[RMDB]
RNA sequence: GGGAACGACUCGAGUAGAGUCGAAAAGCAACUUAGGAUUUUAGGCUCCCCGUGCGUGUCUCGAACCAUGCCGGGCCAAACCCACGGGGGCUGGCGGUCCACGUGCGGUCAAAAUCAAACCGCUGGAAAAACAGUUCUAGCUUCGGCUAGAACUGAAGAAGUAUCAGGUCUUCGGACCUGAUACUUCAAAAGAAACAACAACAACAAC
Reactivity to 2A3 in 0.01 (KOAc 150mM, MgCl2 10mM, bicine 150mM(pH8.5), 24C), signal-to-noise 2, nucleotides 027 to 156: g080c060a050a130c110u130u150a210g000g010a060u080u030u050u160a040g000g000c060u300c000c000c000c030g010u050g020c020g010u070g040u000c010u040c110g070a110a100c100c070a110u070g060c010c010g020g000g000c020c000a120a130a020c010c010c010a000c020g000g000g000g030g000c030u000g000g010c010g000g000u000c000c000a010c050g110u050g000c040g020g020u050c110a030a070a160a300u060c050a130a070a050c020c000g050c020u050g070g000a050a070a040a000a010c000a000g000u020u000c000u000a000g000c000u080u010c240g040g000c000u000a000g000a000a000c010u000g000a010a000
Chemical mapping of a 207-nucleotide RNA with 2A3. For 2A3, 821 sequencing reads were counted. It was measured as part of the RMDB library M2RFPK. Values cover nucleotides 27 to 156.